[RMDB]
RNA sequence: GGGAACGACUCGAGUAGAGUCGAAAAAUACUUCUCAGGAUGGCGCGUUGCAGUCCAACAAGAUCAAGGGACUGUACAGAAUUUUCCUAUACCUCGAGUCGGGUUUGGAAUCUAAGGUUGACUCGCUAAAACUUUACGUGGUUCGCCACGUAAAGAACAUUUUUAAUUGGUUCGCCAAUUAAAAAUGAAAAGAAACAACAACAACAAC
Reactivity to 2A3 in 0.01 (KOAc 150mM, MgCl2 10mM, bicine 150mM(pH8.5), 24C), signal-to-noise 5, nucleotides 027 to 156: a000u100a050c030u040u020c020u020c020a030g100g010a080u080g050g030c020g010c050g120u100u050g020c000a000g000u000c000c010a040a050c080a170a150g120a200u200c110a070a090g060g000g000a010c000u000g000u020a010c010a010g140a120a050u050u040u010u030c000c000u020a020u090a110c000c010u020c040g020a020g010u040c020g010g000g000u030u080u060g030g010a030a020u020c060u110a130a110g110g020u100u140g030a020c010u020c020g010c040u100a100a100a030a040c000u010u000u000a000c000g000u000g010g040u030u050c140g030c050c000a000c000g000u000a000a000a000g000a000a000
Reactivity to DMS in 0.01 (KOAc 150mM, MgCl2 10mM, bicine 150mM(pH8.5), 24C), signal-to-noise 2, nucleotides 027 to 156: a100u010a060c070u010u000c030u010c020a200g030g000a080u010g010g030c060g000c070g050u000u010g020c020a010g010u020c010c000a090a180c080a090a140g020a170u020c110a140a200g030g030g000a020c010u010g050u000a080c090a140g020a130a100u000u000u000u000c030c010u010a120u010a050c050c010u000c020g000a060g070u010c030g020g020g010u000u000u000g020g000a090a080u000c080u010a070a090g030g020u000u000g030a040c030u000c010g000c090u010a030a080a110a110c000u000u000u010a010c010g030u000g000g000u010u000c300g020c020c000a010c010g010u000a000a000a000g020a060a150

Structure probing data (2A3 and DMS) for a 207-nucleotide construct. Source: RMDB library M2RFPK, as collected in RNAgym. For DMS the reverse transcriptase was MarathonRT. For 2A3 the reverse transcriptase was SuperScript II with manganese. 2A3 is a SHAPE reagent: it acylates the 2'-hydroxyl of flexible nucleotides of all four kinds.